[RMDB]
RNA sequence: GGGAACGACUCGAGUAGAGUCGAAAAUCUGUCCUAUGUCGAUCGGGCGUCCGCGCUAAGCUCGGCGUCAAUAUGGGCAUUCCAGGGGAGCCCGGAGUGGCCAGGUUGUCCAAGGAGGAACGCACCGGGCGAGGCCCGAAAGGGAGCAGCCAAAAGUACAUAAUGAUACGUUCGCGUAUCAUUAUGUAAAAGAAACAACAACAACAAC
Reactivity to DMS in 0.01 (KOAc 150mM, MgCl2 10mM, bicine 150mM(pH8.5), 24C), signal-to-noise 1, nucleotides 027 to 156: u000c040u070g000u020c020c020u010a070u000g010u010c050g000a090u000c080g010g020g050c010g000u000c020c060g020c080g060c040u000a070a240g000c020u000c020g030g000c050g030u010c050a030a050u000a090u000g000g010g010c010a070u000u000c010c010a060g000g030g000g000a290g000c010c000c000g040g000a080g040u010g020g010c010c000a110g010g000u000u000g000u010c020c010a070a060g030g010a120g020g010a060a070c050g000c030a070c050c000g000g020g000c000g000a170g010g020c000c000c010g020a050a050a150g000g040g010a150g030c070a160g060c010c020a050a030a040a160g060u000
Reactivity to 2A3 in 0.01 (KOAc 150mM, MgCl2 10mM, bicine 150mM(pH8.5), 24C), signal-to-noise 3, nucleotides 027 to 156: u010c010u020g070u050c000c020u090a120u110g070u040c080g040a170u010c020g020g000g000c020g020u030c080c060g090c040g020c060u130a130a030g090c010u020c050g000g020c020g030u030c010a040a020u090a050u090g000g000g020c000a020u080u020c030c050a100g010g000g000g100a130g090c030c040c050g060g040a070g010u090g010g050c010c020a020g020g020u040u020g030u050c050c010a010a040g080g020a020g000g030a090a000c040g000c040a050c040c030g010g000g000c010g020a040g000g050c000c020c000g000a010a010a010g010g000g010a020g050c010a010g020c040c000a050a110a000a010g070u030
Source information:
Structure probing data (DMS and 2A3) for a 207-nucleotide construct. Reactivities are rounded to 0.1 and cut off at 0 and 3. 2A3 adducts were read by reverse transcription with SuperScript II with manganese. Conditions: 150 mM KOAc, 10 mM MgCl2 and 150 mM bicine (pH 8.5), 24 C. The DMS profile rests on 2,138 reads. For DMS the reverse transcriptase was MarathonRT.